[RMDB]
RNA sequence: GGGAACGACUCGAGUAGAGUCGAAAACGGCAAACCGGCAGGUUUGUGCACAACCAGAAUUCCAUAUUCACAAAUACGCACCGCCGCUAGAACUAUGGGCUCGACGCCCGUGGCGCCCAUACGCACGACUGGACGUAAAUUUCGAUUUACGUCCAGUAAAAGAAACAACAACAACAAC
Reactivity to 2A3 in 0.01 (KOAc 150mM, MgCl2 10mM, bicine 150mM(pH8.5), 24C), signal-to-noise 2, nucleotides 027 to 126: c040g030g010c010a030a010a030c020c010g150g020c090a110g090g020u010u060u060g050u080g030c030a010c020a090a040c040c000a030g090a040a030u090u010c050c010a050u070a050u300u130c030a010c010a050a110a070u140a030c030g020c030a010c010c020g060c020c020g050c050u060a040g030a150a010c010u030a070u100g000g010g010c020u030c050g110a060c070g010c000c000c000g000u010g010g000c020g030c000c000c000a110u090a050c050g040c030a030c070g120
Reactivity to DMS in 0.01 (KOAc 150mM, MgCl2 10mM, bicine 150mM(pH8.5), 24C), signal-to-noise 3, nucleotides 027 to 126: c110g020g010c020a050a030a060c030c010g020g020c280a110g010g000u000u000u000g010u010g040c100a080c120a040a100c040c050a110g000a050a140u010u010c060c010a030u000a070u000u000c060a060c110a080a070a070u020a100c080g020c030a050c050c090g010c020c030g000c050u000a050g010a090a090c110u000a040u000g010g010g020c000u000c130g010a070c140g010c030c040c030g000u000g010g000c120g000c010c010c040a100u000a040c180g030c120a100c100g010
Conditions: 150 mM KOAc, 10 mM MgCl2 and 150 mM bicine (pH 8.5), 24 C. Chemical mapping of a 177-nucleotide RNA with 2A3 and DMS.